Chemical mapping of a 177-nucleotide RNA with DMS. It was measured as part of the RMDB library OK2TST. The RNA was probed in 150 mM KOAc, 10 mM MgCl2 and 150 mM bicine (pH 8.5) at 24 C. For DMS, 736 sequencing reads were counted.

RNA sequence: GGGAACGACUCGAGUAGAGUCGAAAAAAUAGGAGAUUUAAAAGAGGUUGUCGUAAACCGACUCAAUAACUCUACUGCAAGUAACUUACCGUUAUGUUGGUAAACAGGUUCACAGAUAAAAGCGCAAACCAAAACUUAGGUUCGCCUAAGUUUUGGUAAAAGAAACAACAACAACAAC
Reactivity to DMS in 0.01 (KOAc 150mM, MgCl2 10mM, bicine 150mM(pH8.5), 24C), signal-to-noise 1, nucleotides 027 to 126: a070a060u010a090g020g020a060g010a120u010u000u020a060a070a200a120g000a260g010g020u000u020g000u020c290g010u010a050a050a020c100c020g040a140c060u000c030a060a090u010a090a020c020u000c000u000a060c000u020g000c090a020a060g000u010a010a070c050u000u020a060c020c020g000u010u010a090u020g010u000u010g020g010u000a020a030a080c110a020g000g000u000u000c020a040c050a050g020a060u000a040a030a080a080g010c110g040c230a090a060